[RMDB]
RNA sequence: GGGAACGACUCGAGUAGAGUCGAAAAUGUGUUCCUAGGUCGGAAGCAUCAAUCCCAGGGGAAGCCAACUGCAGAACAUUUUAUGCAUCGCUCAUCCUGUUAUGAGCCUGGUGCUGUUCCAUCUCUCGGGAGAGCCUAGUUUCGACUAGGCUCUCCCAAAAGAAACAACAACAACAAC
Reactivity to 2A3 in 0.01 (KOAc 150mM, MgCl2 10mM, bicine 150mM(pH8.5), 24C), signal-to-noise 2, nucleotides 027 to 126: u180g000u000g130u010u010c000c040u120a190g000g150u000c010g000g040a060a060g000c040a040u020c020a020a190u020c000c000c000a110g010g040g000g060a000a040g040c030c010a060a000c150u090g000c040a000g040a070a000c010a080u120u050u070u160a090u180g000c000a020u030c010g000c040u040c000a060u140c020c060u240g000u240u030a070u150g020a010g000c010c080u080g000g000u000g000c020u020g020u000u000c070c020a050u090c080u000c020u100c070
Reactivity to DMS in 0.01 (KOAc 150mM, MgCl2 10mM, bicine 150mM(pH8.5), 24C), signal-to-noise 1, nucleotides 027 to 126: u000g000u000g040u000u000c000c000u040a000g000g000u010c060g010g090a010a210g010c090a040u050c130a110a150u000c010c020c010a170g020g010g000g010a110a040g000c000c040a080a140c100u000g000c040a070g000a100a090c050a030u000u000u000u000a020u010g000c010a050u000c040g010c000u000c010a030u000c030c110u120g000u040u030a090u000g000a050g010c010c100u010g000g000u000g010c040u000g040u020u030c040c020a110u010c060u020c030u010c240